[RMDB]
RNA sequence: GGGAACGACUCGAGUAGAGUCGAAAAAGCAUGCUUCGAAUACUCUCUCGAAAAGUCGAAUAAAUAAAUAAAGACGAAUAAAAUAAGUGUAAAAUCACAAAGAUUCGAGCAUGCGAAGAGAGAGGAAGGGUACAAAGUAGUUCGCUACUUUGUACCCAAAAGAAACAACAACAACAAC
Reactivity to DMS in 0.01 (KOAc 150mM, MgCl2 10mM, bicine 150mM(pH8.5), 24C), signal-to-noise 1, nucleotides 027 to 126: a090g000c000a010u000g030c000u020u000c000g040a050a020u000a100c020u000c010u000c040u000c000g010a250a130a120a300g000u010c000g000a140a190u000a150a110a190u080a120a040a120u030a110a070a110g000a050c010g040a040a100u030a150a040a210a050u040a040a090g040u000g000u000a100a120a170a210u010c000a070c040a070a050a040g000a020u000u000c000g040a000g000c010a030u000g000c000g010a020a000g000a000g050a000g000a000g020g000a050a100
Reactivity to 2A3 in 0.01 (KOAc 150mM, MgCl2 10mM, bicine 150mM(pH8.5), 24C), signal-to-noise 2, nucleotides 027 to 126: a030g000c010a000u020g010c000u170u200c010g020a020a020u200a210c020u000c000u000c010u000c080g000a020a030a030a100g000u030c030g040a010a010u110a030a050a000u130a110a030a000u120a010a090a000g000a000c020g010a000a020u110a090a080a090a020u120a130a130g000u020g010u030a130a090a030a060u210c010a000c020a000a070a000g180a000u080u000c000g000a000g000c010a000u000g030c000g000a000a000g050a000g020a010g000a020g000g080a070a030